[RMDB]
RNA sequence: GGGAACGACUCGAGUAGAGUCGAAAAGCACGUAGGUUCAGAUGAUGGGCCCGCAUCUGUACGAAAGUAGGACGAAAGUGGAGCCUACGUGCAUGAGCACGCGGGCCCCGUGCUCUACUGCAAAAGAGGGUCAUAUAAUCUUCGGAUUAUAUGACCCAAAAGAAACAACAACAACAAC
Reactivity to DMS in 0.01 (KOAc 150mM, MgCl2 10mM, bicine 150mM(pH8.5), 24C), signal-to-noise 2, nucleotides 027 to 126: g010c020a000c010g000u000a000g000g020u000u010c010a030g000a010u000g000a040u050g000g000g000c000c000c000g030c000a000u010c000u010g000u020a020c000g020a190a120a140g010u000a070g000g010a050c030g000a040a130a170g010u010g000g020a000g020c000c000u000a000c000g010u000g010c000a000u030g000a000g000c020a000c000g000c120g000g000g010c010c000c000c000g000u000g000c000u000c000u030a050c050u000g010c210a050a060a100a100g000a300
Reactivity to 2A3 in 0.01 (KOAc 150mM, MgCl2 10mM, bicine 150mM(pH8.5), 24C), signal-to-noise 4, nucleotides 027 to 126: g000c000a000c010g010u000a000g000g010u020u020c040a010g030a090u060g020a030u090g060g000g010c020c000c000g000c010a000u010c010u060g140u120a040c040g050a080a030a060g090u140a040g160g130a040c080g090a250a030a000g150u180g150g020a020g010c010c000u000a000c000g000u020g000c000a000u040g000a010g000c000a000c000g010c020g000g000g000c000c010c000c000g010u010g010c000u000c000u000a040c020u050g170c110a080a010a020a010g200a110
The data come from the RNA Mapping Database (RMDB), library OK1LIB. Chemical mapping of a 177-nucleotide RNA with DMS and 2A3. The RNA was probed in 150 mM KOAc, 10 mM MgCl2 and 150 mM bicine (pH 8.5) at 24 C.